Conditions: 150 mM KOAc, 10 mM MgCl2 and 150 mM bicine (pH 8.5), 24 C. The record gives the reactivity of an RNA of 177 nucleotides to 2A3 and DMS. For 2A3 the reverse transcriptase was SuperScript II with manganese. For 2A3, 2,363 sequencing reads were counted. Source: RMDB library RFM100, as collected in RNAgym.
[RMDB]
RNA sequence: GGGAACGACUCGAGUAGAGUCGAAAAGUGUGCUCGCCUGUAGUCCCUGCCGUACGACCCGAAGCCGGGCGAUCUAGGCGGGGGCAGGGUGAAGCGGUGCGAAAGCGCCGUGGAGGCCCGCAGGGGUUUACCAUGAGGAUUUCGAUCCUCAUGGUAAAAAAGAAACAACAACAACAAC
Reactivity to 2A3 in 0.01 (KOAc 150mM, MgCl2 10mM, bicine 150mM(pH8.5), 24C), signal-to-noise 4, nucleotides 027 to 126: g080u070g010u060g070c050u050c060g120c010c000u030g040u050a010g010u030c000c000c000u010g010c000c000g070u110a090c010g230a300c010c000c010g060a160a040g140c170c040g010g000g000c000g010a050u020c080u160a080g000g020c000g010g000g000g000g010c000a020g000g000g020u040g010a010a000g000c020g000g010u040g000c000g060a170a050a040g000c000g010c000c010g000u020g020g010a090g060g170c020c010c000g000c020a010g000g020g000g000u010
Reactivity to DMS in 0.01 (KOAc 150mM, MgCl2 10mM, bicine 150mM(pH8.5), 24C), signal-to-noise 2, nucleotides 027 to 126: g020u030g000u000g030c010u010c040g010c000c000u000g020u020a100g010u000c010c000c000u000g000c010c020g010u030a140c090g010a160c020c010c000g000a230a200g020c290c020g040g000g010c040g040a080u010c100u060a080g000g030c000g040g000g000g020g010c010a050g000g000g000u010g000a260a190g010c000g000g030u000g000c010g030a090a080a170g030c010g020c000c000g000u000g000g000a260g020g000c000c010c020g010c030a020g000g010g010g020u020

DMS adducts were read by reverse transcription with MarathonRT.